[RMDB]
RNA sequence: GGGAACGACUCGAGUAGAGUCGAAAAUGACGUUAAACUGCUGACUCAUACAUACUGACACCGGUUGCUCAACAGGCUGUGUGGGACAAUAGAAUAACAAGGCUGUCAACUUGAGCUUGACGGCUGCAAAACCUGCAGUACUUCGGUACUGCAGGAACGGUACACCUUUCUUCGGAAAGGUGUACCGAAAAGAAACAACAACAACAAC
Reactivity to 2A3 in 0.01 (KOAc 150mM, MgCl2 10mM, bicine 150mM(pH8.5), 24C), signal-to-noise 2, nucleotides 027 to 156: u060g150a040c130g000u080u070a070a050a050c010u030g030c010u060g010a030c000u000c000a000u000a060c020a000u140a020c010u040g070a040c000a050c110c030g140g000u160u130g040c070u020c070a070a100c000a070g020g000c050u030g000u000g010u010g000g000g020a010c020a030a030u080a080g110a020a030u100a000a030c040a100a040g080g000c000u000g010u010c000a000a000c030u050u280g060a020g060c050u000u000g000a010c000g000g000c000u020g000c030a000a000a040a160c000c000u000g000c000a020g000u000a000c010u040u060c130g110g000u000a000c000u020g010c010a000g000g000a000a000

Chemical mapping of a 207-nucleotide RNA with 2A3. The reactions ran in a buffer of 150 mM KOAc, 10 mM MgCl2 and 150 mM bicine (pH 8.5), at 24 C. The 2A3 profile rests on 997 reads. For 2A3 the reverse transcriptase was SuperScript II with manganese. Source: RMDB library M2RFPK, as collected in RNAgym.